[RMDB]
RNA sequence: GGGAACGACUCGAGUAGAGUCGAAAAAGCUGGAAUUACAGGUCCGUGCCACGAUGCCCGGCUAAUUUUUGUAUUUUCAGUAGAGGUGGAGUUUCGCCAUGUUGGCCAGGCUGGCCUCAAACUCUUGGCCUGAAGCAAUCCGCCUGCCUUGGCCUCCAUGUAUUAUAGGGUUCGCCCUAUAAUACAUAAAAGAAACAACAACAACAAC
Reactivity to DMS in 0.01 (KOAc 150mM, MgCl2 10mM, bicine 150mM(pH8.5), 24C), signal-to-noise 2, nucleotides 027 to 156: a130g010c020u000g010g010a030a040u000u000a030c010a060g000g030u010c050c030g030u000g000c010c050a150c150g010a160u000g010c020c010c020g000g040c040u010a040a050u010u010u010u010u010g000u010a020u000u000u000u000c000a070g010u000a090g010a080g010g020u010g020g010a180g010u000u000u000c040g020c020c030a080u010g020u000u000g030g010c010c010a050g010g010c040u000g010g010c020c020u000c090a050a070a050c040u000c040u010u010g010g010c030c020u000g010a090a080g020c050a080a100u000c040c030g000c000c020u010g010c020c040u000u010g040g030c010c010u010c060c060
Reactivity to 2A3 in 0.01 (KOAc 150mM, MgCl2 10mM, bicine 150mM(pH8.5), 24C), signal-to-noise 4, nucleotides 027 to 156: a000g010c010u020g000g010a020a010u020u010a020c010a040g060g030u080c020c010g000u020g000c000c010a200c120g070a220u180g000c040c030c000g010g000c070u110a080a170u050u170u120u140u080g010u000a010u010u000u000u020c020a020g010u050a050g090a050g020g030u030g030g060a090g030u020u060u060c020g020c020c010a060u120g050u080u060g050g000c010c000a020g040g000c050u060g020g020c000c020u110c040a160a200a140c070u080c040u090u090g050g010c030c070u060g060a030a010g020c020a020a140u050c030c070g010c000c010u010g000c000c000u060u070g030g020c000c010u000c010c020